[RMDB]
RNA sequence: GGGAACGACUCGAGUAGAGUCGAAAAGUUUACCCAGUAUUUGUAAAGAAAGGGAUCUAGCUCACCUCCAGUUGCAUGGAGGAGAAGACAGGAAACAGCCCCCUUUCUGAAGGCAUGAAUUGCUUGGUAUGCUAUCUUAAUUCGUUAAGAUAGCAUAAAAAGAAACAACAACAACAAC
Reactivity to 2A3 in 0.01 (KOAc 150mM, MgCl2 10mM, bicine 150mM(pH8.5), 24C), signal-to-noise 8, nucleotides 027 to 126: g010u030u090u240a150c010c000c000a010g020u060a130u160u180u130g090u080a090a100a010g000a010a000a000g010g000g010a040u040c020u070a040g020c010u010c000a040c000c000u000c000c000a030g020u110u120g140c080a080u020g030g000a000g010g020a000g010a010a000g020a020c060a030g100g050a090a140a030c030a070g020c020c010c000c000c020u000u000u000c000u000g010a020a030g070g010c010a020u070g130a200a110u160u090g020c010u020u020g040g030
Reactivity to DMS in 0.01 (KOAc 150mM, MgCl2 10mM, bicine 150mM(pH8.5), 24C), signal-to-noise 9, nucleotides 027 to 126: g010u010u010u010a120c000c000c010a190g010u010a080u010u010u000g010u010a100a210a030g000a010a010a010g010g000g010a110u000c030u000a110g010c070u000c040a170c010c000u000c000c000a020g000u010u020g010c240a200u000g000g010a010g010g000a040g010a070a050g010a130c110a110g000g010a070a080a120c230a110g000c150c130c000c000c010u000u000u000c000u000g000a100a080g000g010c040a030u000g000a090a100u010u000g010c020u000u000g010g010
Structure probing data (2A3 and DMS) for a 177-nucleotide construct.
In probing experiments dimethyl sulfate is read out at A N1 and C N3, which are open when not base-paired.
The reactions ran in a buffer of 150 mM KOAc, 10 mM MgCl2 and 150 mM bicine (pH 8.5), at 24 C.
Source: RMDB library OK2TST, as collected in RNAgym.
2A3 is a SHAPE reagent: it acylates the 2'-hydroxyl of flexible nucleotides of all four kinds.
The DMS profile rests on 61,392 reads.